Description:
An RNA of 177 nucleotides, treated with DMS and 2A3 and read out base by base. Source: RMDB library TTRDEL, as collected in RNAgym. DMS adducts were read by reverse transcription with MarathonRT. Values cover nucleotides 27 to 126. For 2A3, 4,170 sequencing reads were counted. For 2A3 the reverse transcriptase was SuperScript II with manganese. The RNA was probed in 150 mM KOAc, 10 mM MgCl2 and 150 mM bicine (pH 8.5) at 24 C.

RNA sequence: GGGAACGACUCGAGUAGAGUCGAAAAGAUAUGGAGCGGGAUGCAGAGGUGUAACAAUGUCGGAAACGACUAUACACUACCCACCUGCAUUCGCUCCUAAGUCAAAAGGCAAGCUUCGGCUUGCCAACGCUACUUUCAAGUUCGCUUGAAAGUAGCGAAAAGAAACAACAACAACAAC
Reactivity to DMS in 0.01 (KOAc 150mM, MgCl2 10mM, bicine 150mM(pH8.5), 24C), signal-to-noise 2, nucleotides 027 to 126: g000a040u000a030u000g000g010a000g030c000g020g020g000a000u000g000c000a030g000a100g000g000u000g000u010a010a230c300a130a120u000g030u010c000g010g000a040a010a060c000g010a030c000u000a150u000a020c000a000c010u000a030c040c130c100a300c000c000u000g020c000a030u000u000c000g000c000u000c010c000u000a000a070g000u000c040a120a050a060a040g000g000c000a000a020g010c010u010u020c300g030g000c020u000u000g000c000c010a020a000
Reactivity to 2A3 in 0.01 (KOAc 150mM, MgCl2 10mM, bicine 150mM(pH8.5), 24C), signal-to-noise 2, nucleotides 027 to 126: g000a010u000a000u050g000g000a010g000c040g000g130g020a010u000g000c010a010g000a030g000g010u020g010u020a110a080c160a300a240u300g000u000c000g000g000a010a030a000c010g020a000c010u020a030u010a080c020a010c000u060a080c080c080c020a070c000c000u000g000c000a000u020u020c010g000c000u030c000c000u000a040a010g000u010c030a090a000a140a070g020g010c000a020a010g000c000u110u240c300g110g000c000u010u000g000c000c000a000a000